[RMDB]
RNA sequence: GGGAACGACUCGAGUAGAGUCGAAAAAACUCAGCUAGGGAGAGUAUAACAUUCAUGUUGACGAGACCUAGACGAAACACAGAGGAAAAUUAUUCAUCACUGGAUAGUAUUAGUAAUGACUCUGUGUAAAACUCUUCUACGUUCGCGUAGAAGAGAAGACUAAUACUGGCUUCGGCCAGUAUUAGUCAAAAGAAACAACAACAACAAC
Reactivity to 2A3 in 0.01 (KOAc 150mM, MgCl2 10mM, bicine 150mM(pH8.5), 24C), signal-to-noise 2, nucleotides 027 to 156: a010a000c020u020c030a010g000c010u000a000g020g030g020a050g040a030g050u050a090u080a300a030c050a030u120u180c060a050u210g040u030u040g040a030c070g000a040g040a070c000c000u010a010g010a120c070g030a000a020a000c000a000c000a000g010a000g040g050a060a140a000a060u040u020a010u020u000c020a020u030c020a000c040u060g000g070a170u290a300g030u040a020u040u030a030g020u010a020a090u010g040a040c000u030c000u020g000u000g000u000a010a010a010a010c000u000c000u000u000c000u000a000c000g030u030u010c130g010c000g110u000a000g000a000a000g000a000g000a050a010
Reactivity to DMS in 0.01 (KOAc 150mM, MgCl2 10mM, bicine 150mM(pH8.5), 24C), signal-to-noise 1, nucleotides 027 to 156: a070a120c030u000c060a100g000c010u000a000g020g000g000a200g000a250g050u000a100u010a080a010c020a080u030u000c140a090u000g000u010u000g000a080c030g020a300g080a100c030c000u000a010g010a300c090g000a100a130a030c030a000c020a010g000a040g050g000a040a090a060a050u000u000a040u000u010c030a070u010c150a130c220u000g010g010a090u000a030g040u000a300u020u000a040g020u000a060a180u010g010a100c010u000c020u010g090u010g050u000a020a020a030a120c000u000c000u000u000c000u000a000c000g010u010u000c190g040c040g000u000a000g000a000a000g010a010g040a000a090
Annotation
The data come from the RNA Mapping Database (RMDB), library M2RFPK. Chemical mapping of a 207-nucleotide RNA with 2A3 and DMS. The reactions ran in a buffer of 150 mM KOAc, 10 mM MgCl2 and 150 mM bicine (pH 8.5), at 24 C. The 2A3 profile rests on 1,138 reads. The DMS profile rests on 1,558 reads.